[RMDB]
Structure probing data (DMS and 2A3) for a 177-nucleotide construct. The DMS profile rests on 6,592 reads. Source: RMDB library M2PK50, as collected in RNAgym. The reactions ran in a buffer of 150 mM KOAc, 10 mM MgCl2 and 150 mM bicine (pH 8.5), at 24 C. DMS (dimethyl sulfate) methylates the pairing face of unpaired adenines and cytosines.

RNA sequence: GGGAACGACUCGAGUAGAGUCGAAAAGUCUCCCGAUUCGUCGGGAGACCGAGAAAUUCAGGUGAUUUGCUACCUUUAACUGCAGCUAGAAAUUCAAAGGAAACACCAUGGCGUUCGCGCCAUGGAAAGAUACUAGGGGAUUCGUCCCCUAGUAUCUAAAAGAAACAACAACAACAAC
Reactivity to DMS in 0.01 (KOAc 150mM, MgCl2 10mM, bicine 150mM(pH8.5), 24C), signal-to-noise 6, nucleotides 027 to 126: g010u000c000u000c000c000c000g010a040u000u000c140g040u000c010g010g000g010a020g010a000c010c030g010a100g010a300a060a090u000u000c090a030g010g000u000g000a110u010u010u000g000c020u000a030c010c010u000u010u010a030a030c180u000g000c020a030g010c160u010a090g000a060a070a120u000u010c060a040a050a080g010g000a080a060a080c150a150c000c000a010u000g010g010c000g010u000u010c230g020c000g010c000c000a000u010g000g000a020a040
Reactivity to 2A3 in 0.01 (KOAc 150mM, MgCl2 10mM, bicine 150mM(pH8.5), 24C), signal-to-noise 1, nucleotides 027 to 126: g000u000c000u000c000c000c000g000a030u050u040c170g020u010c000g040g010g000a020g000a010c000c000g010a020g110a040a170a040u230u130c090a030g000g020u030g020a120u090u140u150g030c010u040a030c020c000u080u170u160a060a060c080u060g000c020a020g010c020u150a060g160a150a140a090u200u150c090a130a110a060g100g000a150a100a010c050a020c030c000a000u010g000g010c010g020u040u020c210g010c010g000c040c000a010u010g010g030a010a000